[RMDB]
An RNA of 177 nucleotides, treated with 2A3 and DMS and read out base by base. 2A3 adducts were read by reverse transcription with SuperScript II with manganese. For DMS, 2,932 sequencing reads were counted. The RNA was probed in 150 mM KOAc, 10 mM MgCl2 and 150 mM bicine (pH 8.5) at 24 C.
RNA sequence: GGGAACGACUCGAGUAGAGUCGAAAACUCCUAGCACGGAUACCGAGCACCCACGCGGAGCACAUGCCGCGGAAUAGGCAAAAGUGUUGCGGACCUGCGUAGUUUCGAAAAGCGGACGGCCACGACGGAAAGAUAUACGGUUCGCCGUAUAUCUUUCAAAAGAAACAACAACAACAAC
Reactivity to 2A3 in 0.01 (KOAc 150mM, MgCl2 10mM, bicine 150mM(pH8.5), 24C), signal-to-noise 2, nucleotides 027 to 126: c020u020c010c020u030a010g010c020a040c120g040g020a040u120a180c000c010g010a030g000c010a000c020c010c010a030c020g020c020g030g030a050g070c050a050c010a170u190g050c020c020g000c070g020g030a050a110u180a070g030g010c020a060a100a040a040g040u030g040u050u130g060c020g000g020a120c010c010u010g000c000g000u040a040g010u010u050u120c050g050a040a050a110a030g060c020g010g030a040c010g020g040c010c020a030c030g130a020c030g080
Reactivity to DMS in 0.01 (KOAc 150mM, MgCl2 10mM, bicine 150mM(pH8.5), 24C), signal-to-noise 4, nucleotides 027 to 126: c130u000c010c010u000a100g010c030a020c090g010g010a140u010a050c040c020g020a100g010c040a060c030c020c050a130c030g010c000g000g000a100g020c140a100c250a070u010g000c010c010g000c040g020g010a100a060u020a100g000g010c130a050a070a090a140g010u000g000u000u000g020c020g010g000a140c030c010u010g030c030g010u000a060g010u000u010u010c040g010a050a080a100a090g010c020g020g000a080c040g010g000c020c030a050c040g010a060c120g000